[RMDB]
RNA sequence: GGGAACGACUCGAGUAGAGUCGAAAAAGGUGUGUCCGUGUGGCAUCGGAGAGUGAUGCUCCGGGAGUACAGCGUGAGGAUGACGAUCGCCAGUGGAUCUGGACUCAAGUUCUUCCACUGUCAUCAAUCAACUCAACGGGUUCGCUCGUUGGGUUGAAAAAGAAACAACAACAACAAC
Reactivity to 2A3 in 0.01 (KOAc 150mM, MgCl2 10mM, bicine 150mM(pH8.5), 24C), signal-to-noise 9, nucleotides 027 to 126: a000g090g010u050g000u010g020u000c010c020g070u100g050u110g090g000c010a020u010c030g070g040a130g010a020g110u190g050a020u040g010c000u000c010c000g020g020g010a050g040u060a030c020a020g020c020g040u060g040a050g050g000a040u100g030a020c030g010a030u040c040g010c020c000a000g000u020g020g020a040u060c120u150g010g010a010c020u060c260a130a110g000u010u000c000u020u000c010c000a010c010u010g010u010c000a010u020c000a000a070
Reactivity to DMS in 0.01 (KOAc 150mM, MgCl2 10mM, bicine 150mM(pH8.5), 24C), signal-to-noise 9, nucleotides 027 to 126: a070g010g010u000g010u020g010u010c010c020g010u020g020u030g010g010c020a020u010c020g010g010a120g010a160g020u040g010a050u010g000c010u000c020c010g000g000g000a090g020u020a050c060a070g010c060g010u010g010a140g000g000a060u010g000a090c030g000a080u010c090g010c060c010a030g000u010g010g000a030u040c100u010g000g010a020c040u020c240a110a170g010u000u000c020u010u000c010c010a020c020u000g000u000c030a050u010c060a090a180